Chemical mapping of a 207-nucleotide RNA with DMS and 2A3. For 2A3 the reverse transcriptase was SuperScript II with manganese. It was measured as part of the RMDB library OK3TST. For DMS the reverse transcriptase was MarathonRT. DMS (dimethyl sulfate) methylates the pairing face of unpaired adenines and cytosines.

[RMDB]
RNA sequence: GGGAACGACUCGAGUAGAGUCGAAAAUUUGUUGCUGAAUGCUUUUCUCAAACACAAGAUUAUCUGGAAGCUUAGCAUGGAAAGUAGGAUUGCUUUUGUUGGGAGGUGGAAAGGAGUUUGUCAUAAGGCAGCUAUAUUUAUAAACACACACAAGAUAUCAGGUAUGGUAUUUCGAUACCAUACCUGAAAAAGAAACAACAACAACAAC
Reactivity to DMS in 0.01 (KOAc 150mM, MgCl2 10mM, bicine 150mM(pH8.5), 24C), signal-to-noise 2, nucleotides 027 to 156: u000u010u020g010u010u000g000c000u010g000a120a080u010g010c010u000u000u020u020c020u010c040a090a080a150c060a170c110a060a080g000a190u010u000a060u000c080u000g000g020a080a120g000c030u010u000a040g010c060a070u000g020g000a100a040a100g000u000a060g020g010a070u000u000g030c020u000u000u010u020g000u000u000g020g020g010a100g000g030u010g000g010a090a110a120g010g040a110g020u000u020u000g060u000c020a050u010a080a220g000g030c030a050g000c070u000a080u000a070u000u000u000a090u020a110a100a080c060a110c090a070c080a090c100a050a170g000a060u000a180
Reactivity to 2A3 in 0.01 (KOAc 150mM, MgCl2 10mM, bicine 150mM(pH8.5), 24C), signal-to-noise 2, nucleotides 027 to 156: u070u090u070g050u010u040g000c030u040g080a160a120u100g020c050u060u020u020u090c090u050c000a060a130a010c080a010c020a030a050g030a180u110u100a030u230c040u050g040g030a060a000g000c010u030u030a010g020c040a070u050g010g070a070a020a030g050u100a040g110g080a030u030u070g000c050u030u070u100u160g020u050u020g020g010g000a060g070g020u060g020g020a010a040a060g040g000a030g030u020u090u060g030u020c040a060u060a070a010g020g000c000a000g000c000u030a060u000a000u100u150u050a130u120a040a140a040c040a000c010a000c000a000c020a130a030g000a040u120a030